[RMDB]
RNA sequence: GGGAACGACUCGAGUAGAGUCGAAAAUCACUCUUGUUAGGUGAAAGUUGAUGGUCGCCGAGCCAGUCCGUACAUCCAAAAAGGACUCUAUGUAGUAGGAAGUCGAGAGCCUAUGAGAGUUAGAGUCAUGCCUAUUUUGUGUUCGCACAAAAUAGAACACGUAACUUACCUUCGGGUAAGUUACGUGAAAAGAAACAACAACAACAAC
Reactivity to 2A3 in 0.01 (KOAc 150mM, MgCl2 10mM, bicine 150mM(pH8.5), 24C), signal-to-noise 2, nucleotides 027 to 156: u030c000a020c030u070c000u030u080g090u080u150a030g010g000u030g040a100a080a060g080u110u080g050a060u090g070g050u050c050g000c120c040g010a020g030c030c010a020g070u030c000c010g040u050a070c030a090u050c040c020a020a090a020a020a020g080g000a000c010u000c000u020a050u140g040u010a050g020u010a000g010g020a030a040g060u080c100g030a010g020a010g270c000c000u010a060u070g050a050g000a000g120u010u030a010g000a000g020u040c030a060u120g080c000c000u000a000u010u000u000u010g020u000g000u000u040c170g060c110a000c000a000a000a000a000u000a000g010a000a000
Reactivity to DMS in 0.01 (KOAc 150mM, MgCl2 10mM, bicine 150mM(pH8.5), 24C), signal-to-noise 2, nucleotides 027 to 156: u000c040a050c000u010c020u000u000g030u000u010a080g020g010u010g020a050a100a100g000u000u000g000a160u010g010g030u000c040g140c040c030g040a100g080c030c040a120g010u000c010c030g020u000a090c040a060u010c040c060a030a050a050a110a030g030g000a050c020u000c020u000a040u010g000u010a280g020u000a010g000g010a050a070g000u020c140g010a260g010a100g000c020c020u000a010u010g010a220g010a180g000u000u000a050g000a050g020u000c010a050u000g000c040c010u010a000u000u010u000u010g060u000g000u000u000c300g030c000a030c010a020a010a000a020u000a030g020a040a150